This 177-nucleotide RNA was probed chemically with DMS and 2A3.
The reactions ran in a buffer of 150 mM KOAc, 10 mM MgCl2 and 150 mM bicine (pH 8.5), at 24 C.
For 2A3, 3,643 sequencing reads were counted.
Values cover nucleotides 27 to 126.
It was measured as part of the RMDB library M2PK50.
RNA sequence: GGGAACGACUCGAGUAGAGUCGAAAACCGUUGAUCUUCGGAUCAACGGAAAUAAAAGCUCACCACCUGUAAUAAACAAGAGCAAGGCAGGAAAAUAAAUAAAAACGUGGGACUUCGGUCCCACGAAGACCUAUUAUGAGUUCGCUCAUAAUAGGUCAAAAGAAACAACAACAACAAC
Reactivity to DMS in 0.01 (KOAc 150mM, MgCl2 10mM, bicine 150mM(pH8.5), 24C), signal-to-noise 2, nucleotides 027 to 126: c000c000g020u000u000g010a020u010c010u000u010c190g010g020a000u000c010a000a000c010g000g000a030a030a060u010a100a190a040a160g000c050u000c040a110c130c040a130c050c010u000g010u000a070a130u010a160a070a060c150a030a070g000a060g010c020a040a090g020g000c020a080g000g000a130a060a080a060u010a080a070a100u010a100a060a040a130a120c030g000u010g040g020g000a010c000u000u040c270g020g010u000c000c020c000a000c020g000a010a040
Reactivity to 2A3 in 0.01 (KOAc 150mM, MgCl2 10mM, bicine 150mM(pH8.5), 24C), signal-to-noise 3, nucleotides 027 to 126: c000c000g000u010u010g000a000u000c010u020u060c280g190g000a010u000c000a000a010c000g000g020a000a010a000u040a000a040a000a020g030c010u030c030a080c050c020a060c020c010u020g030u060a110a120u070a180a300a030c100a160a050g030a000g130c070a060a040g110g000c020a010g030g050a040a050a030a050u140a030a080a020u100a040a070a040a000a020c010g000u020g000g000g000a000c010u000u070c210g080g000u010c000c000c000a000c000g000a010a000